Structure probing data (DMS and 2A3) for a 177-nucleotide construct. For DMS the reverse transcriptase was MarathonRT. It was measured as part of the RMDB library RFMREP. For 2A3 the reverse transcriptase was SuperScript II with manganese. The reactions ran in a buffer of 150 mM KOAc, 10 mM MgCl2 and 150 mM bicine (pH 8.5), at 24 C. Values are in units of 0.01, from 0 to 300, in steps of 10.
RNA sequence: GGGAACGACUCGAGUAGAGUCGAAAAUUCGUGAUCCGGAAGGCUUCCGGGUCUUACCGCUUACUGCAUGAUUUGCGCGCUGUUAACGCCAAGCUUGUUCCUUUUGGGGCCGUCCAACAGGGGGCGCGAGAGUUAAUAAGUUCGCUUAUUAACUCUCAAAAGAAACAACAACAACAAC
Reactivity to DMS in 0.01 (KOAc 150mM, MgCl2 10mM, bicine 150mM(pH8.5), 24C), signal-to-noise 4, nucleotides 027 to 126: u000u000c080g020u000g000a000u000c020c010g010g000a040a130g010g020c230u000u000c010c010g010g000g020u000c010u000u010a090c120c040g020c090u000u000a090c110u000g000c050a050u000g000a120u000u010u000g010c070g020c050g010c030u000g010u000u010a110a090c080g020c020c040a060a050g000c080u000u000g010u000u010c010c010u000u000u000u000g010g000g000g020c080c090g010u000c030c030a050a080c160a080g000g000g020g010g010c100g010c180
Reactivity to 2A3 in 0.01 (KOAc 150mM, MgCl2 10mM, bicine 150mM(pH8.5), 24C), signal-to-noise 4, nucleotides 027 to 126: u140u100c040g010u040g010a000u000c010c000g000g040a030a030g240g040c080u090u010c000c000g020g000g000u000c010u000u050a020c000c020g020c090u050u090a090c050u100g060c030a070u060g050a270u190u050u080g050c050g000c000g000c020u050g040u180u070a090a010c020g000c010c000a030a010g010c020u040u060g010u060u060c010c000u070u110u080u090g030g010g050g040c050c020g050u020c000c010a030a040c010a060g060g030g010g000g020c010g000c030